[RMDB]
RNA sequence: GGGAACGACUCGAGUAGAGUCGAAAAAGCGCUCCCACUAGCAGAUGGCCGUUGUGGGUCGGGCUGCGCAACAGCUCGCCCGAACAAUCCUGGUCACGCAUGGCGCCGCUCUCCCUCGCUAGCUGGGGCUUAGCGGCACAUUCGUGUGCCGCUAAGCAAAAGAAACAACAACAACAAC
Reactivity to 2A3 in 0.01 (KOAc 150mM, MgCl2 10mM, bicine 150mM(pH8.5), 24C), signal-to-noise 1, nucleotides 027 to 126: a000g060c070g040c010u040c000c000c000a030c060u050a020g000c110a040g080a300u080g050g000c040c020g060u090u030g050u070g060g040g020u190c050g000g020g000c030u030g000c070g070c100a050a170c000a040g000c000u000c030g020c020c010c000g040a010a010c010a010a040u010c040c050u080g000g000u030c020a000c030g030c000a040u020g050g000c060g000c020c040g000c040u000c050u030c000c010c000u040c050g040c040u060a050g030c060u030g010g000g040
Reactivity to DMS in 0.01 (KOAc 150mM, MgCl2 10mM, bicine 150mM(pH8.5), 24C), signal-to-noise 2, nucleotides 027 to 126: a050g010c080g000c070u000c030c000c000a060c060u000a030g000c080a110g000a130u010g020g000c070c030g030u000u000g030u000g000g010g010u010c020g000g000g020c000u020g010c140g010c300a100a200c010a030g000c000u000c010g010c040c000c010g010a100a030c100a070a050u010c170c120u000g030g000u000c010a010c090g010c080a080u000g000g000c040g020c030c020g000c030u000c130u000c040c000c000u000c120g020c070u020a000g010c160u010g030g010g000
Description: Conditions: 150 mM KOAc, 10 mM MgCl2 and 150 mM bicine (pH 8.5), 24 C. The record gives the reactivity of an RNA of 177 nucleotides to 2A3 and DMS. The DMS profile rests on 1,250 reads. The 2A3 profile rests on 1,301 reads.